Structure probing data (2A3 and DMS) for a 207-nucleotide construct. Reactivities are given for positions 27 through 156. The 2A3 profile rests on 4,194 reads.

[RMDB]
RNA sequence: GGGAACGACUCGAGUAGAGUCGAAAAGUCCUAGUGAAAGUUGGGCUGUGAUGCAGGUCGAGAGUGGACUAUCUCUCGUUAAUCCAGAGUCCAAGCCAAAAGUAACUGCGAACAACAUCGUUCCUUUCGCUCGUAAAGCUGCUGCGGUAGCCUAAGAGAUAUGUCCCAAGUUCGCUUGGGACAUAUCAAAAGAAACAACAACAACAAC
Reactivity to 2A3 in 0.01 (KOAc 150mM, MgCl2 10mM, bicine 150mM(pH8.5), 24C), signal-to-noise 4, nucleotides 027 to 156: g070u010c000c010u050a030g020u020g080a050a030a000g040u060u050g030g000g010c020u000g070u070g090a060u080g020c090a040g000g110u070c010g000a000g000a000g010u080g030g090a090c070u060a090u110c000u010c000u000c020g050u050u040a020a030u020c010c000a010g010a000g120u000c000c000a020a010g030c020c020a090a110a030a030g090u100a060a070c080u060g020c030g020a020a020c020a030a050c020a180u130c060g000u010u030c000c000u000u030u020c020g000c010u020c040g080u080a020a070a000g010c010u020g000c010u010g040c070g120g000u000a010g000c000c040u050a090a020g060a000
Reactivity to DMS in 0.01 (KOAc 150mM, MgCl2 10mM, bicine 150mM(pH8.5), 24C), signal-to-noise 2, nucleotides 027 to 156: g040u010c010c000u010a110g030u000g010a080a060a150g010u010u010g030g020g040c020u000g010u010g010a100u010g020c080a090g010g020u000c020g010a090g010a060g020u000g010g010a110c080u010a120u000c010u000c000u010c010g020u000u010a080a140u010c030c040a080g010a070g020u000c010c030a080a120g000c060c060a030a110a080a140g000u010a040a080c060u000g000c020g000a020a050c060a090a080c100a100u000c010g010u000u000c000c000u010u000u000c050g020c000u000c070g030u010a080a040a170g020c010u020g010c010u000g000c080g030g010u000a050g020c030c030u010a080a090g010a300